[RMDB]
RNA sequence: GGGAACGACUCGAGUAGAGUCGAAAAGCGUACUACGAAAGCCUUAAGAGGUGGACGGAUAUAUCCCAAAUAGGAUAUAUUUUGUCCACUACCCACCUUAAGGAACUACUUUCGUAUCGCAAACAGCCGCAUCGUCGUUCGCGACGAUGCGGCUGAACCAACUUUACUACUUCGGUAGUAAAGUUGGAAAAGAAACAACAACAACAAC
Reactivity to 2A3 in 0.01 (KOAc 150mM, MgCl2 10mM, bicine 150mM(pH8.5), 24C), signal-to-noise 1, nucleotides 027 to 156: g020c010g020u130a100c020u020a000c070g030a010a010a000g010c010c000u030u020a000a000g000a010g020g010u020g020g010a000c000g000g010a000u000a000u000a000u040c010c040c130a080a250a150u300a040g020g010a000u000a000u000a000u000u050u150u300g000u000c020c000a000c000u010a000c000c010c010a120c010c000u000u000a000a000g010g030a030a020c060u160a030c000u110u000u000c000g050u000a020u300c000g000c030a030a060a060c010a000g000c020c000g000c000a020u020c000g000u000c000g030u090u080c220g010c020g080a000c030g000a000u000g000c000g010g000c090u000g000a030a010